RNA sequence: GGGAACGACUCGAGUAGAGUCGAAAAUCAUUUGGAGGUUAAGUCCUCACUCGUGGUCACCGUUUCUCUAACUCCUAGAGAGAAGAAGAUACUAGAGAGAGAAUUGGGUUUUGUCCCAUUAUAUAAGCAUGUUAUGUCAUUUCGAUGACAUAACAUGAAAAGAAACAACAACAACAAC
Reactivity to DMS in 0.01 (KOAc 150mM, MgCl2 10mM, bicine 150mM(pH8.5), 24C), signal-to-noise 9, nucleotides 027 to 126: u010c030a080u000u010u010g030g010a050g010g010u000u000a100a200g000u000c040c010u000c010a190c030u000c040g000u000g000g010u000c050a150c060c030g010u000u000u000c000u000c010u000a080a130c110u010c140c080u000a040g000a100g010a150g000a080a090g010a100a110g010a150u010a060c030u000a080g010a070g010a060g000a080g000a050a060u000u000g010g010g010u000u000u000u010g000u000c000c000c000a080u000u010a070u000a120u000a100a130g020
Reactivity to 2A3 in 0.01 (KOAc 150mM, MgCl2 10mM, bicine 150mM(pH8.5), 24C), signal-to-noise 8, nucleotides 027 to 126: u030c010a020u060u090u230g130g020a080g020g030u080u100a110a080g300u100c000c000u010c010a040c020u030c020g050u060g020g020u040c020a020c090c000g000u000u030u010c020u000c000u020a130a150c020u040c060c020u070a030g020a000g070a000g030a190a040g060a060a020g040a040u110a150c020u040a040g010a010g000a000g020a000g040a130a070u110u130g060g000g020u070u100u140u150g050u030c010c010c000a010u190u050a120u030a040u020a090a020g070

Chemical mapping of a 177-nucleotide RNA with DMS and 2A3. DMS adducts were read by reverse transcription with MarathonRT. For DMS, 12,583 sequencing reads were counted.